[RMDB]
RNA sequence: GGGAACGACUCGAGUAGAGUCGAAAAGAUAUGGAGCUGUUUGACAUGCUACUCGGAAACGAGAUAGCAACAGCAAGACAGCUCCUAAGUCAAAACGUUACGUUAUGGUUCGCCAUAACGUAACGAACUCUCAUAUUUGCUUCGGCAAAUAUGAGAGAAAAGAAACAACAACAACAAC
Reactivity to DMS in 0.01 (KOAc 150mM, MgCl2 10mM, bicine 150mM(pH8.5), 24C), signal-to-noise 3, nucleotides 027 to 126: g020a020u010a300u010g000g000a020g010c000u000g000u000u000u000g010a250c180a210u000g000c000u010a010c010u010c000g000g010a070a090a110c000g010a010g010a100u000a010g000c020a010a050c250a140g000c160a100a020g000a020c010a010g020c000u000c000c000u000a010a080g020u000c060a080a080a070a180c010g000u000u000a000c010g000u000u000a000u020g000g010u000u010c210g010c000c010a010u000a000a000c000g010u000a000a000c010g010a030a040
Reactivity to 2A3 in 0.01 (KOAc 150mM, MgCl2 10mM, bicine 150mM(pH8.5), 24C), signal-to-noise 3, nucleotides 027 to 126: g020a000u040a020u100g010g010a010g000c010u010g110u060u040u040g180a140c090a090u030g010c000u000a000c000u000c010g000g010a020a020a040c010g030a020g080a190u020a010g020c020a030a080c070a070g100c000a010a010g130a020c010a000g000c000u000c000c000u000a050a010g010u020c020a030a070a040a120c000g000u000u010a000c000g000u000u010a000u020g020g080u030u170c300g050c070c000a010u000a000a000c000g010u000a000a000c000g000a000a000
Chemical mapping of a 177-nucleotide RNA with DMS and 2A3. It was measured as part of the RMDB library TTRDEL. For 2A3 the reverse transcriptase was SuperScript II with manganese. For DMS, 2,432 sequencing reads were counted. The reactions ran in a buffer of 150 mM KOAc, 10 mM MgCl2 and 150 mM bicine (pH 8.5), at 24 C.